[RMDB]
An RNA of 177 nucleotides, treated with 2A3 and DMS and read out base by base.
RNA sequence: GGGAACGACUCGAGUAGAGUCGAAAAAUGGUGACCUUCGGGUCACCAUGGUGCGUAGCUGCGUUAAUUAAAUAGCUACGCUUAAUAAAUUUAAUUAACGCAAUGGAGCCUGCUUCGGCAGGCUCAACAUUUCUCCUUGUUUCGACAAGGAGAAAUGAAAAGAAACAACAACAACAAC
Reactivity to 2A3 in 0.01 (KOAc 150mM, MgCl2 10mM, bicine 150mM(pH8.5), 24C), signal-to-noise 2, nucleotides 027 to 126: a010u010g000g000u000g000a010c020c020u030u030c250g090g020g000u000c010a000c010c000a000u000g000g000u080g010c030g010u040a020g010c040u040g000c020g000u020u000a020a000u030u020a060a040a140u110a020g000c010u020a010c020g000c000u020u120a060a010u070a020a060a040u060u090u050a000a010u010u010a000a000c010g030c000a010a100u100g130g000a010g000c010c000u010g000c020u040u030c130g090g010c030a010g000g000c000u010c000a000a000
Reactivity to DMS in 0.01 (KOAc 150mM, MgCl2 10mM, bicine 150mM(pH8.5), 24C), signal-to-noise 2, nucleotides 027 to 126: a010u000g000g010u000g010a000c000c000u000u000c210g040g020g000u000c000a000c000c000a000u000g010g030u000g000c020g010u000a020g010c040u000g010c000g010u000u000a000a020u000u000a010a030a130u000a090g000c010u000a010c010g010c010u000u000a030a050u000a070a100a090u010u000u000a000a010u000u000a000a010c000g010c000a230a110u000g000g010a010g010c000c000u000g010c000u000u010c220g030g010c000a000g010g000c000u000c000a010a060
Background: DMS adducts were read by reverse transcription with MarathonRT. It was measured as part of the RMDB library M2PK50.